[RMDB]
Structure probing data (2A3 and DMS) for a 177-nucleotide construct.
For 2A3 the reverse transcriptase was SuperScript II with manganese.
2A3 is a SHAPE reagent: it acylates the 2'-hydroxyl of flexible nucleotides of all four kinds.
RNA sequence: GGGAACGACUCGAGUAGAGUCGAAAAGUGACACUAGGUGAGAUUCGUGGUGUUUAGUGUUGGGUAGGGUGAUAUAUAAGGAGUAUAUCGAUAUUCAAUACUUAUAUAUCUUUCUCACUCUCAUCACCUAUUAUAAUUACUUCGGUAAUUAUAAUAGAAAAGAAACAACAACAACAAC
Reactivity to 2A3 in 0.01 (KOAc 150mM, MgCl2 10mM, bicine 150mM(pH8.5), 24C), signal-to-noise 7, nucleotides 027 to 126: g030u030g010a010c010a010c050u060a020g070g030u030g050a050g010a050u070u050c050g040u110g010g000u000g000u010u030u050a010g000u000g010u020u030g010g010g020u030a030g040g020g060u060g000a000u000a000u000a000u000a020a060g110g010a050g060u030a030u010a020u080c040g020a030u010a030u040u040c010a030a040u030a120c000u030u000a010u000a000u000a000u030c000u010u070u000c010u000c000a030c020u010c000u000c000a030u000c000a010c000
Reactivity to DMS in 0.01 (KOAc 150mM, MgCl2 10mM, bicine 150mM(pH8.5), 24C), signal-to-noise 6, nucleotides 027 to 126: g000u000g000a050c040a040c040u020a060g010g010u010g010a060g000a090u010u030c150g020u010g010g010u010g010u010u000u010a030g010u000g020u010u000g010g000g010u000a060g000g000g020u010g010a010u000a000u000a000u000a040a040g010g000a100g030u000a030u010a090u050c160g000a080u000a010u010u000c020a080a140u040a300c010u000u000a010u010a010u000a010u000c000u010u010u010c020u000c050a070c050u000c020u020c050a040u000c000a030c000